[RMDB]
The record gives the reactivity of an RNA of 177 nucleotides to 2A3. It was measured as part of the RMDB library M2PK50. For 2A3 the reverse transcriptase was SuperScript II with manganese. Values are in units of 0.01, from 0 to 300, in steps of 10. The reactions ran in a buffer of 150 mM KOAc, 10 mM MgCl2 and 150 mM bicine (pH 8.5), at 24 C.
RNA sequence: GGGAACGACUCGAGUAGAGUCGAAAACUCGAACGGUUCGCCGUUCGAGAAAAGCGCGUCUGCGCUACGAUGCAAGCGCAAGCGCGUGCAUCGUAAAUGAAAAAACUUGUGUGUUCGCACACAAGAAGGUGUUGCAAAUGUUCGCAUUUGCAACACCAAAAGAAACAACAACAACAAC
Reactivity to 2A3 in 0.01 (KOAc 150mM, MgCl2 10mM, bicine 150mM(pH8.5), 24C), signal-to-noise 1, nucleotides 027 to 126: c000u000c000g000a000a010c000g000g040u100u080c140g050c030c000g000u000u030c000g000a000g000a000a050a000a010g040c000g000c010g070u080c180u250g000c000g000c000u010a010c000g030a000u020g040c030a040a040g000c000g000c070a130a080g130c050g020c010g010u020g000c010a020u000c000g070u050a070a110a080u260g030a160a040a000a010a010a050c000u010u000g000u000g000u000g020u030u020c140g000c050a000c000a000c000a000a000g050a000a060